[RMDB]
RNA sequence: GGGAACGACUCGAGUAGAGUCGAAAAACAUAUUAAACUAUGGUAUGUUGCAUAUUAUUUCUUUCAGCAGUGUGCCUCAGUUUACACACCCGUAAGCAGUAGAGAUAAGGAUGUCAUUUUUCUGUCACCACUUGAUAGUGUCAGUAUUUUAAAACAAGACCGUAUCCUGAUUCGUCAGGAUACGGUCAAAAGAAACAACAACAACAAC
Reactivity to 2A3 in 0.01 (KOAc 150mM, MgCl2 10mM, bicine 150mM(pH8.5), 24C), signal-to-noise 1, nucleotides 027 to 156: a010c010a060u090a030u060u100a000a040a130c070u060a070u110g000g050u080a050u030g030u030u040g000c000a000u110a030u300u020a240u110u190u110c130u040u070u070c010a040g000c000a000g000u020g000u020g020c000c000u120c050a030g020u020u020u010a030c100a000c060a130c010c030c000g090u110a060a010g000c030a040g020u110a050g010a000g000a070u060a090a000g080g000a030u100g010u010c030a090u000u000u000u090u030c000u000g000u000c030a010c090c010a050c040u060u120g040a020u160a130g040u030g100u080c040a030g000u060a180u080u050u060u220a050a010a000a000c080a030a030
Conditions: 150 mM KOAc, 10 mM MgCl2 and 150 mM bicine (pH 8.5), 24 C.
Chemical mapping of a 207-nucleotide RNA with 2A3.
2A3 adducts were read by reverse transcription with SuperScript II with manganese.
For 2A3, 388 sequencing reads were counted.